[RMDB]
RNA sequence: GGGAACGACUCGAGUAGAGUCGAAAAAACCCGUUGAUUGAAAUUGAACCGUCCUGUUAUCGAAAGAUAGGCAGAAGAUACGAAAUGUGUGACAGCAUGGGAAGUAUAGGCAGACCGUGGUUCCCUUAAAAUCGUCGAAUCUUCGGAUUCGACGAAAGACAUAUGUGUUCUUCGGAACACAUAUGUCAAAAGAAACAACAACAACAAC
Reactivity to 2A3 in 0.01 (KOAc 150mM, MgCl2 10mM, bicine 150mM(pH8.5), 24C), signal-to-noise 1, nucleotides 027 to 156: a000a000c050c020c000g030u070u040g140a300u010u100g010a050a080a090u030u070g030a040a010c060c020g110u110c090c000u000g000u090u040a030u030c020g010a040a080a000g030a030u030a030g040g000c000a000g030a120a030g020a040u150a090c050g060a010a100a120u070g000u010g000u040g030a060c000a040g040c030a020u040g050g000g000a120a010g050u070a100u030a130g070g000c020a010g010a010c000c020g030u030g010g000u020u010c000c000c000u040u050a070a200a020a060u020c010g000u010c000g000a000a000u000c010u000u060c180g100g000a000u020u000c000g030a000c000g000a000a000a000
Reactivity to DMS in 0.01 (KOAc 150mM, MgCl2 10mM, bicine 150mM(pH8.5), 24C), signal-to-noise 2, nucleotides 027 to 156: a110a110c030c000c020g000u000u000g010a160u000u000g020a060a110a090u000u000g000a080a080c030c010g040u000c030c000u000g010u030u000a090u000c050g020a130a080a210g010a060u000a010g020g020c030a040g000a030a090g000a100u000a110c040g000a090a080a040u000g050u000g050u000g020a090c080a110g010c030a070u020g020g000g000a120a140g010u000a140u010a100g010g030c030a040g010a100c040c030g010u000g020g010u000u000c000c020c000u000u000a020a060a080a180u000c010g030u000c000g010a000a010u000c020u010u000c270g020g010a020u000u000c010g000a010c000g000a000a000a050